[RMDB]
RNA sequence: GGGAACGACUCGAGUAGAGUCGAAAAGAUAUGGAAGCUUUGGAACUACGACCCAGGGAUCGGAAACGAUCCCGGGUCGCUUUCGAAAGCUUCCUAAGUCAAACCGGGUCUGUUCGCAGACCCGGAACAUUUAACAUUGCUUCGGCAAUGUUAAAUGAAAAGAAACAACAACAACAAC
Reactivity to 2A3 in 0.01 (KOAc 150mM, MgCl2 10mM, bicine 150mM(pH8.5), 24C), signal-to-noise 2, nucleotides 027 to 126: g020a020u080a030u130g000g000a010a000g010c010u050u060u100g100g030a050a030c100u190a120c300g000a010c020c050c300a300g040g000g000a000u000c030g010g060a080a040a040c020g010a000u000c040c000c020g010g000g020u000c010g010c000u020u010u010c010g050a030a020a000g000c000u000u000c000c000u000a040a000g020u030c020a020a050a180c010c000g000g020g000u000c000u000g080u070u150c300g040c120a010g000a010c000c000c020g010g000a000a000
Reactivity to DMS in 0.01 (KOAc 150mM, MgCl2 10mM, bicine 150mM(pH8.5), 24C), signal-to-noise 2, nucleotides 027 to 126: g000a020u000a290u020g000g000a010a010g000c000u000u000u000g000g000a010a040c180u000a100c020g020a010c000c000c000a080g060g000g010a010u020c000g010g000a080a080a150c000g010a010u000c000c000c010g020g000g040u000c000g000c070u000u020u000c000g010a010a020a020g000c000u010u000c000c000u010a010a100g000u000c030a050a100a210c000c010g000g000g020u000c000u000g010u000u010c190g010c020a020g000a010c010c020c000g000g000a020a040

Chemical mapping of a 177-nucleotide RNA with 2A3 and DMS. Reactivities are rounded to 0.1 and cut off at 0 and 3. DMS adducts were read by reverse transcription with MarathonRT. 2A3 adducts were read by reverse transcription with SuperScript II with manganese. The RNA was probed in 150 mM KOAc, 10 mM MgCl2 and 150 mM bicine (pH 8.5) at 24 C. For DMS, 2,506 sequencing reads were counted. The data come from the RNA Mapping Database (RMDB), library TTRDEL.